Overview: Chemical mapping of a 177-nucleotide RNA with DMS. The reactions ran in a buffer of 150 mM KOAc, 10 mM MgCl2 and 150 mM bicine (pH 8.5), at 24 C. DMS adducts were read by reverse transcription with MarathonRT.

RNA sequence: GGGAACGACUCGAGUAGAGUCGAAAAAACAGCCGGCGUUGUGACAGGUAAUGUUGUAAAACAGUGUUGCACUGCUGCUGUUGAUUUAAGUAUGGAUAAGUUGCGCCGUGUGGAUUGGAAAUCAACCGUCAUUUGAAAUCUUCGGAUUUCAAAUGACAAAAGAAACAACAACAACAAC
Reactivity to DMS in 0.01 (KOAc 150mM, MgCl2 10mM, bicine 150mM(pH8.5), 24C), signal-to-noise 2, nucleotides 027 to 126: a020a010c000a010g010c050c050g010g010c010g030u000u000g010u010g000a010c000a030g000g010u020a100a070u010g020u010u000g020u020a100a110a030a010c000a030g000u000g000u000u000g020c020a030c010u010g010c000u000g010c000u000g010u000u000g020a090u000u000u000a060a080g020u000a040u010g000g020a090u000a050a110g030u020u010g000c060g020c180c000g000u000g010u010g020g000a100u000u000g010g000a070a110a050u020c100a070a060c190c120